[RMDB]
RNA sequence: GGGAACGACUCGAGUAGAGUCGAAAAGAGUCAUACAACCCCAGAAACCAUUCCUUAUACCUUGAGUAUUGCUGAAUUCAGUUUAGCGUGCAUGCUCUUGGCUACUCUCAUAGUGAUUGUCAAAUUUAAAACGACGAUGACUUCGGUCAUCGUCGAAGAAUUACUCAAUCUUCGGAUUGAGUAAUUCAAAAGAAACAACAACAACAAC
Reactivity to DMS in 0.01 (KOAc 150mM, MgCl2 10mM, bicine 150mM(pH8.5), 24C), signal-to-noise 2, nucleotides 027 to 156: g010a060g010u000c050a140u000a120c010a110a110c020c010c010c020a120g000a160a090a070c020c020a160u000u000c020c060u010u010a170u000a040c000c010u010u000g010a080g030u000a030u000u000g020c000u010g020a060a080u000u010c150a150g000u010u000u000a060g000c030g020u000g030c050a130u000g000c000u000c010u000u000g030g030c010u000a100c070u000c060u000c040a120u000a120g020u010g010a110u030u000g030u000c000a080a100a150u000u000u000a050a080a190a200c000g000a010c000g010a020u000g010a030c000u000u010c300g070g050u000c000a000u000c000g010u000c000g000a000a040
Reactivity to 2A3 in 0.01 (KOAc 150mM, MgCl2 10mM, bicine 150mM(pH8.5), 24C), signal-to-noise 4, nucleotides 027 to 156: g020a010g020u050c040a020u060a200c040a050a080c010c000c010c010a010g170a050a070a010c040c010a080u080u120c020c030u130u090a070u060a200c000c010u020u030g000a010g020u030a040u090u130g050c000u030g030a140a150u170u180c070a110g140u050u040u130a050g020c050g030u050g030c020a020u010g000c000u000c000u000u030g000g000c000u030a020c010u000c010u020c030a070u100a140g090u070g110a160u020u100g030u050c040a060a060a120u070u180u250a090a100a010a010c000g000a000c000g000a000u000g000a000c020u010u030c180g020g000u000c000a000u010c000g000u000c000g000a010a000
Conditions: 150 mM KOAc, 10 mM MgCl2 and 150 mM bicine (pH 8.5), 24 C. An RNA of 207 nucleotides, treated with DMS and 2A3 and read out base by base. For 2A3 the reverse transcriptase was SuperScript II with manganese. Reactivities are given for positions 27 through 156. The data come from the RNA Mapping Database (RMDB), library M2RFPK.